This 177-nucleotide RNA was probed chemically with 2A3. For 2A3, 384 sequencing reads were counted. The reactions ran in a buffer of 150 mM KOAc, 10 mM MgCl2 and 150 mM bicine (pH 8.5), at 24 C. It was measured as part of the RMDB library OK1LIB.
[RMDB]
RNA sequence: GGGAACGACUCGAGUAGAGUCGAAAAACUGUGGUAGGAUGUGCCGCACGCAAUUAGCAUCAAGCGGCGGCAGCGCUUGAUCUCCGGUAUGUACUCCUUGAUGCCACCCAGAACCACGGUCUGCGUACGAUCCACGAGGCUUCGGCCUCGUGGAUCGAAAAGAAACAACAACAACAAC
Reactivity to 2A3 in 0.01 (KOAc 150mM, MgCl2 10mM, bicine 150mM(pH8.5), 24C), signal-to-noise 1, nucleotides 027 to 126: a000c130u050g000u050g070g000u070a030g020g090a040u030g100u000g070c100c000g070c130a230c200g020c000a030a150u200u070a070g000c050a030u020c070a080a000g000c000g000g010c050g020g020c020a030g000c000g000c000u070u240g010a040u060c000u060c000c030g010g000u030a000u060g080u070a060c000u030c030c030u010u000g100a010u070g000c000c000a000c040c020c020a050g000a030a060c000c000a070c010g070g070u090c090u000g030c030g030u020a030